[RMDB]
An RNA of 177 nucleotides, treated with 2A3 and read out base by base. For 2A3 the reverse transcriptase was SuperScript II with manganese. Reactivities are rounded to 0.1 and cut off at 0 and 3. The RNA was probed in 150 mM KOAc, 10 mM MgCl2 and 150 mM bicine (pH 8.5) at 24 C. Values cover nucleotides 27 to 126.
RNA sequence: GGGAACGACUCGAGUAGAGUCGAAAACAAAACCAUUCUGCUCGUAGGAGGUUCCUCUACGUGCUGGAGCCUGGAGCCCUUUGAAACGGGUGUUCCCAUCUUAAACUUGAGAGGGGAGAACAACGCGCCCCUGCGGGAUGUUCGCAUCCCGCAGGGGAAAAGAAACAACAACAACAAC
Reactivity to 2A3 in 0.01 (KOAc 150mM, MgCl2 10mM, bicine 150mM(pH8.5), 24C), signal-to-noise 2, nucleotides 027 to 126: c040a010a120a010a010c020c010a010u030u000c000u010g000c000u020c030g090u120a020g000g210a080g010g020u070u050c000c000u090c000u030a110c020g060u100g000c060u120g030g000a010g080c050c040u040g100g000a180g000c040c000c020u130u220u020g160a130a120a010c010g000g090g000u030g000u060u000c000c030c000a060u000c000u040u090a170a140a280c070u190u100g080a060g010a000g000g120g000g000a090g070a020a020c040a000a000c090g100c020g000